RNA sequence: GGGAACGACUCGAGUAGAGUCGAAAACACGCGAUAAGUUGGAAAAACUUAUCUCUACUGCUCGUGAUGGCGUAAGGCGAGGCGAUAACUUCCAUAGUGUCUUAACAACAUUCAUUGACGCAGCACGCACGGCUGCGCUUCGGCGCAGCCAAAAGAAACAACAACAACAAC
Reactivity to DMS in 0.01 (KOAc 150mM, MgCl2 10mM, bicine 150mM(pH8.5), 24C), signal-to-noise 3, nucleotides 027 to 129: c090a120c170g020c170g010a000u060a000a020g010u020u060g080g030a010a010a000a000a000c040u040u030a000u030c020u050c030u100a130c050u050g020c020u040c060g010u070g010a090u000g040g040c120g040u040a070a040g020g030c050g030a050g010g050c140g030a070u020a050a070c000u010u020c000c100a020u040a070g150u020g030u000c030u000u100a140a040c130a110a070c010a050u020u050c080a060u020u110g040a080c000g080c040a020g030c140a080c180g060c160a060c300
Reactivity to 2A3 in 0.01 (KOAc 150mM, MgCl2 10mM, bicine 150mM(pH8.5), 24C), signal-to-noise 7, nucleotides 027 to 129: c080a040c060g050c010g010a020u010a000a000g000u010u030g180g040a190a100a010a050a000c000u000u000a010u000c000u030c010u080a110c030u010g020c000u010c030g050u040g020a040u030g040g010c060g030u040a040a020g030g010c020g040a070g050g000c060g060a050u070a150a090c030u100u040c040c010a060u040a080g100u060g020u050c000u030u060a110a040c050a010a010c000a050u100u100c010a040u040u290g030a020c080g040c010a010g030c020a020c070g050c000a040c060